[RMDB]
RNA sequence: GGGAACGACUCGAGUAGAGUCGAAAACAGGAGAUAUGUAGAAUAUAUUUCUUAUAGAUACAUAUAUUCUCUUUGUUGUUCACAUUGGGGAAAUUCUAUUGAUCUGUCUUCAUAUUCACUGAGUCUCCUUCUGUCAUCUCUAACCUACUGUUAAACCGGAUGUGAUGAAUUUCGAUUCAUCACAUCCAAAAGAAACAACAACAACAAC
Reactivity to 2A3 in 0.01 (KOAc 150mM, MgCl2 10mM, bicine 150mM(pH8.5), 24C), signal-to-noise 1, nucleotides 027 to 156: c040a000g050g020a040g020a010u050a050u100g060u100a060g010a080a000u090a010u010a060u030u270u080c020u240u300a100u210a230g040a010u230a000c050a000u170a000u050a080u060u000c030u000c020u040u010u030g020u000u060g120u270u230c010a020c020a070u050u070g000g040g020g020a020a120a070u150u020c100u090a130u060u160g100a070u080c060u050g100u040c020u140u030c030a030u010a050u040u040c000a000c010u020g020a050g080u030c010u040c000c000u030u000c020u000g050u000c050a150u030c110u010c010u140a170a180c020c010u050a020c020u070g020u150u110a280a040a030c040c060
Overview
An RNA of 207 nucleotides, treated with 2A3 and read out base by base. Conditions: 150 mM KOAc, 10 mM MgCl2 and 150 mM bicine (pH 8.5), 24 C. Source: RMDB library OK3TST, as collected in RNAgym. The 2A3 profile rests on 407 reads.